Structure probing data (2A3 and DMS) for a 177-nucleotide construct. For 2A3 the reverse transcriptase was SuperScript II with manganese. It was measured as part of the RMDB library OK2TRN.

[RMDB]
RNA sequence: GGGAACGACUCGAGUAGAGUCGAAAAGGACGCGGAGGAGCCCGCGGCGCAGGCGGCGCUCAUAGCAGAGCGCGAUCGGCUGAGGGCGCUGGUGCACAAGCAACAGGCGGAGAUUGCCAUGGUGACGCUCUCAUGACCUUUUCGAAGGUCAUGAGAGAAAAGAAACAACAACAACAAC
Reactivity to 2A3 in 0.01 (KOAc 150mM, MgCl2 10mM, bicine 150mM(pH8.5), 24C), signal-to-noise 1, nucleotides 027 to 126: g070g010a070c070g000c030g070g090a060g020g020a070g030c050c000c030g000c000g030g000c040g050c000a040g070g000c020g000g080c020g000c000u030c030a050u220a040g120c090a070g000a010g000c030g000c000g010a140u040c030g080g000c000u020g020a090g000g050g000c010g020c020u050g020g030u120g010c030a030c010a070a050g000c000a000a050c030a060g080g010c060g000g000a060g000a050u050u260g000c020c010a020u070g030g020u030g010a050c040g010
Reactivity to DMS in 0.01 (KOAc 150mM, MgCl2 10mM, bicine 150mM(pH8.5), 24C), signal-to-noise 3, nucleotides 027 to 126: g010g000a080c080g020c070g030g000a160g010g010a210g010c040c000c020g000c030g020g000c030g040c060a080g020g000c110g010g000c010g000c010u000c000a040u000a130g020c260a170g000a040g040c010g000c020g000a100u010c060g000g000c050u000g000a080g000g000g000c030g010c060u000g000g020u010g010c050a110c160a100a150g000c030a060a070c050a050g000g010c020g000g010a160g010a090u000u000g000c040c060a060u000g020g010u010g020a110c140g000